[RMDB]
RNA sequence: GGGAACGACUCGAGUAGAGUCGAAAAUCAGCACAUUCAGUGUCAUCCUUGUUUACAACACCUGCUGCUGUGAUCGUUGACACCUCCAGCAAUGAUAGUCGGGGUCGUGCAACGGACCAUUAUACUUUUAUUUCAGGUGGUGAGGUAUCUACGGAUCACGUAGGCAUCUUUUCGAAGAUGCCUACGUAAAAGAAACAACAACAACAAC
Reactivity to 2A3 in 0.01 (KOAc 150mM, MgCl2 10mM, bicine 150mM(pH8.5), 24C), signal-to-noise 3, nucleotides 027 to 156: u090c020a010g040c020a020c010a060u150u160c080a080g020u030g050u080c040a120u060c030c010u090u140g070u120u140u070a080c070a120a000c010a030c010c020u050g040c020u030g010c020u050g050u040g040a090u070c020g020u010u020g040a050c000a000c010c000u020c010c000a030g030c050a100a180u150g090a180u100a090g050u080c080g010g060g000g000u050c090g010u050g070c020a030a020c020g040g000a040c060c010a020u160u050a040u090a110c050u120u120u100u180a170u060u090u090c010a010g010g030u020g010g060u080g030a030g020g050u040a080u030c020u030a020c140g070g000a030u040c020
Reactivity to DMS in 0.01 (KOAc 150mM, MgCl2 10mM, bicine 150mM(pH8.5), 24C), signal-to-noise 2, nucleotides 027 to 156: u010c030a090g000c040a080c040a210u010u010c140a150g010u010g020u000c050a120u000c010c050u000u000g000u020u000u000a120c050a050a040c030a050c020c030u020g070c130u000g000c040u000g020u000g020a020u000c020g030u010u000g000a080c010a030c030c020u000c010c010a120g030c060a160a110u020g010a140u020a080g020u000c090g030g020g000g010u010c060g000u000g010c070a020a030c040g030g050a040c020c030a090u020u010a130u010a050c070u000u000u010u000a080u010u040u010c030a090g000g000u000g000g030u010g020a040g000g010u000a050u000c040u000a070c030g000g000a130u000c080